[RMDB]
RNA sequence: GGGAACGACUCGAGUAGAGUCGAAAAGAUAUGGACCGAUCCUUUUGACGCGAGAAACAUCGGAAACGAUGUAUAUCGCGAUAAGGGCGGUCCUAAGUCAAAAGUCGACGACUUCGGUCGUCGACAAGUGAAAUGGAAUGUUCGCAUUCCAUUUCACAAAAGAAACAACAACAACAAC
Reactivity to 2A3 in 0.01 (KOAc 150mM, MgCl2 10mM, bicine 150mM(pH8.5), 24C), signal-to-noise 4, nucleotides 027 to 126: g020a010u060a040u140g010g010a010c000c010g070a300u270c030c020u060u060u080u210g250a150c050g000c010g010a010g000a050a120a000c000a000u010c010g020g010a040a050a030c020g000a000u010g000u000a040u000a000u040c000g000c000g000a000u010a010a000g000g000g010c020g000g000u000c000c000u010a010a010g030u000c010a040a030a060a120g000u010c000g000a010c000g010a010c000u040u090c300g120g000u010c000g000u000c010g000a000c000a000a010
Reactivity to DMS in 0.01 (KOAc 150mM, MgCl2 10mM, bicine 150mM(pH8.5), 24C), signal-to-noise 4, nucleotides 027 to 126: g000a030u010a300u010g000g000a020c000c000g010a090u010c000c000u000u000u000u000g020a190c110g010c000g000a020g000a190a160a020c020a000u010c010g000g000a110a040a220c010g010a020u000g000u000a010u010a240u000c000g010c010g000a080u010a000a010g010g020g000c010g010g010u000c000c000u000a010a060g010u000c020a080a080a110a120g010u000c000g010a020c000g000a010c010u000u010c200g020g000u000c000g010u000c000g000a000c000a010a060
The data come from the RNA Mapping Database (RMDB), library TTRDEL. This 177-nucleotide RNA was probed chemically with 2A3 and DMS. For DMS the reverse transcriptase was MarathonRT.